[RMDB]
RNA sequence: GGGAACGACUCGAGUAGAGUCGAAAACUCAGGGGCUUCGGCCCCUGAGAAACGCGAUGAAGCGGCACUUAGACAGCUUCAUACACCUAAGAAAGUGCAUAAAAACGGUAGACUUCGGUCUACCGAACACUAACGCUGAGUUCGCUCAGCGUUAGUGAAAAGAAACAACAACAACAAC
Reactivity to 2A3 in 0.01 (KOAc 150mM, MgCl2 10mM, bicine 150mM(pH8.5), 24C), signal-to-noise 2, nucleotides 027 to 126: c010u000c000a000g010g030g010g000c010u070u100c210g150g000c010c000c000c000u000g000a000g000a000a000a000c080g030c080g030a020u030g000a010a010g010c020g030g000c030a010c030u040u010a040g040a150c030a050g020c000u010u010c000a000u000a010c070a020c010c020u020a040a020g050a030a070a000g020u040g000c010a070u170a080a120a010a010a040c010g000g000u010a010g000a010c000u020u030c300g030g000u010c000u000a010c000c000g000a010a000
Reactivity to DMS in 0.01 (KOAc 150mM, MgCl2 10mM, bicine 150mM(pH8.5), 24C), signal-to-noise 1, nucleotides 027 to 126: c020u010c000a000g000g030g010g030c010u000u020c200g030g040c000c010c000c000u000g000a000g000a030a050a040c160g010c090g010a050u010g000a010a010g020c000g000g010c010a030c040u000u000a150g030a100c120a060g000c010u000u000c000a040u010a050c090a090c040c000u000a040a050g010a050a050a060g020u000g000c040a120u010a050a040a100a070a090c000g000g010u000a020g020a010c000u000u020c190g070g000u000c000u000a020c000c000g020a010a040